[RMDB]
RNA sequence: GGGAACGACUCGAGUAGAGUCGAAAAAUGUAUCACUUGAUAUUGUUGUAAUAAUGCAUCUAAGUUUUCGCGAAUAAUGCUAUUUAAUUUUUUACUUCCUAAGCUUCCACCCAUAACGAGUAAAACUACUAAUAAGAUCGUUCGCGAUCUUAUUAGUAAAAGAAACAACAACAACAAC
Reactivity to DMS in 0.01 (KOAc 150mM, MgCl2 10mM, bicine 150mM(pH8.5), 24C), signal-to-noise 3, nucleotides 027 to 126: a060u010g020u000a020u000c040a220c210u000u000g010a060u000a060u000u010g000u010u000g000u000a100a100u010a060a080u020g010c040a030u010c030u010a090a140g010u010u000u010u000c090g000c080g010a130a060u000a060a050u000g010c040u010a050u000u000u000a050a010u000u000u010u000u000u000a100c080u000u010c020c010u010a070a080g010c030u000u010c030c040a090c040c030c020a090u000a050a060c160g010a090g030u020a040a050a070a070c170u000
Reactivity to 2A3 in 0.01 (KOAc 150mM, MgCl2 10mM, bicine 150mM(pH8.5), 24C), signal-to-noise 1, nucleotides 027 to 126: a000u070g000u040a040u090c040a040c170u150u080g060a030u080a040u060u110g020u030u070g000u030a060a020u120a220a080u030g040c020a010u000c060u040a000a140g010u030u000u010u300c080g000c010g000a070a030u130a130a030u080g020c010u000a070u110u070u120a110a130u110u030u040u000u000u050a070c010u010u010c000c010u020a090a000g030c010u030u000c050c020a080c000c030c000a000u000a080a020c060g030a030g050u120a000a040a040a000c000u000